Chemical mapping of a 177-nucleotide RNA with 2A3 and DMS. Reactivities are rounded to 0.1 and cut off at 0 and 3. The reactions ran in a buffer of 150 mM KOAc, 10 mM MgCl2 and 150 mM bicine (pH 8.5), at 24 C. DMS adducts were read by reverse transcription with MarathonRT. Source: RMDB library OK1LIB, as collected in RNAgym. Reactivities are given for positions 27 through 126.

RNA sequence: GGGAACGACUCGAGUAGAGUCGAAAAGCUGGGCACCGUUGCGGCCAGCGAAGACAUCUCCCACGGUAGUGCCGGAGUUGUCGAUUAGCAGCUUGACUCUGCGGAUGCACCGAGUCUUGCUGCGAAAGGGAUGCUUCUCCUUCGGGAGGAGCAUCCCAAAAGAAACAACAACAACAAC
Reactivity to 2A3 in 0.01 (KOAc 150mM, MgCl2 10mM, bicine 150mM(pH8.5), 24C), signal-to-noise 3, nucleotides 027 to 126: g000c000u010g020g020g080c080a100c170c130g070u040u210g050c100g010g060c000c000a000g010c010g010a060a010g010a010c020a010u000c010u010c000c040c000a010c030g060g200u150a130g000u030g200c130c050g000g010a020g000u000u010g000u000c000g000a010u040u020a010g000c000a000g000c000u010u010g000a010c000u010c020u060g000c050g070g110a070u250g070c020a060c040c110g000a000g000u000c000u000u000g000c010u010g020c000g000a050a010a010
Reactivity to DMS in 0.01 (KOAc 150mM, MgCl2 10mM, bicine 150mM(pH8.5), 24C), signal-to-noise 2, nucleotides 027 to 126: g010c010u000g010g010g000c080a130c080c100g000u030u000g000c140g010g030c000c010a000g000c000g000a160a130g000a010c010a040u000c010u000c000c000c000a040c000g000g050u050a040g000u000g030c060c080g000g000a050g000u000u010g010u000c020g010a120u020u040a120g000c030a000g010c010u000u010g000a000c000u000c000u000g000c020g000g030a100u080g010c010a040c300c110g020a010g000u000c000u000u000g000c010u000g000c000g000a010a080a130